About this RNA: This 207-nucleotide RNA was probed chemically with DMS and 2A3. It was measured as part of the RMDB library OK3TST. Reactivities are given for positions 27 through 156.
RNA sequence: GGGAACGACUCGAGUAGAGUCGAAAAUCACUUAAUAUAUUUUUGAGAUCUACCAACAUUGACAUAUGUAAGCCCUAGUAAGUUCUGUUAAAUUGCUCUACUGUAUAUUCUAUGCUGGUUGCAGUGGCUUACGCCUGUAAUCCCAGCACUUUGGGAGUCAUAAGGAGCAGUUCGCUGCUCCUUAUGAAAAAGAAACAACAACAACAAC
Reactivity to DMS in 0.01 (KOAc 150mM, MgCl2 10mM, bicine 150mM(pH8.5), 24C), signal-to-noise 1, nucleotides 027 to 156: u020c030a150c060u020u020a020a130u000a090u000a090u010u000u010u010u010g010a120g010a130u000c030u000a120c030c010a070a080c050a060u020u000g020a090c050a070u010a070u000g010u000a080a080g000c030c070c070u010a140g000u000a010a100g000u010u030c050u000g000u000u010a050a110a140u000u010g000c020u000c010u010a040c040u000g010u010a100u000a070u000u000c040u000a050u010g010c000u000g010g000u010u030g020c030a130g010u000g020g030c010u010u000a160c060g000c080c000u040g000u000a070a070u000c070c030c030a060g000c060a020c060u010u000u020g030g010g030a050g000
Reactivity to 2A3 in 0.01 (KOAc 150mM, MgCl2 10mM, bicine 150mM(pH8.5), 24C), signal-to-noise 1, nucleotides 027 to 156: u040c040a050c110u150u090a170a000u090a030u060a130u200u040u040u090u050g070a040g000a080u000c010u090a090c020c050a090a070c000a110u060u120g130a010c020a080u210a030u150g090u030a050a000g010c010c010c010u000a050g010u040a040a090g030u010u080c030u080g000u050u000a140a050a120u140u060g030c010u000c030u030a070c000u000g030u030a090u000a010u250u040c070u000a050u070g010c000u030g000g090u030u030g000c010a070g040u000g050g000c000u020u040a090c050g000c000c000u030g000u090a080a130u110c020c030c030a000g000c060a000c030u100u030u040g030g000g000a040g070